[RMDB]
RNA sequence: GGGAACGACUCGAGUAGAGUCGAAAAGAAAGGCAGCGAGUGCAGCCCACGCAGAGGCAUGCUUUUGCAUGCCCAGUCGAGCCCACGACUUAGGGCAGCUGCGUCACUGAGGGCAGCUGCCGAAAGACGCUGCUAUUAGGUUCGCCUAAUAGCAGCGAAAAGAAACAACAACAACAAC
Reactivity to 2A3 in 0.01 (KOAc 150mM, MgCl2 10mM, bicine 150mM(pH8.5), 24C), signal-to-noise 1, nucleotides 027 to 126: g120a040a030a000g030g020c040a000g030c010g080a070g090u090g000c000a000g000c050c060c010a050c030g090c000a000g020a140g120g000c010a010u010g000c050u200u120u130u300g000c000a010u020g000c000c020c000a010g020u000c010g030a000g000c010c000c030a020c020g060a000c030u080u160a050g140g070g000c030a010g020c010u000g040c050g040u020c050a060c140u120g060a170g010g040g080c020a000g000c010u000g000c010c020g000a000a000a000g030a010
Reactivity to DMS in 0.01 (KOAc 150mM, MgCl2 10mM, bicine 150mM(pH8.5), 24C), signal-to-noise 1, nucleotides 027 to 126: g010a120a100a120g010g000c000a040g020c030g000a130g030u020g000c040a060g010c020c060c120a130c120g010c060a150g000a130g020g000c000a010u010g000c000u010u000u010u000g000c010a010u010g010c000c000c000a000g020u010c010g010a070g040c000c040c000a300c040g030a040c000u010u000a200g000g010g020c010a180g000c060u000g000c020g000u000c080a090c170u000g020a060g010g010g040c000a080g020c020u000g030c000c010g010a020a100a150g000a230
Background:
This 177-nucleotide RNA was probed chemically with 2A3 and DMS. For DMS, 898 sequencing reads were counted. The RNA was probed in 150 mM KOAc, 10 mM MgCl2 and 150 mM bicine (pH 8.5) at 24 C.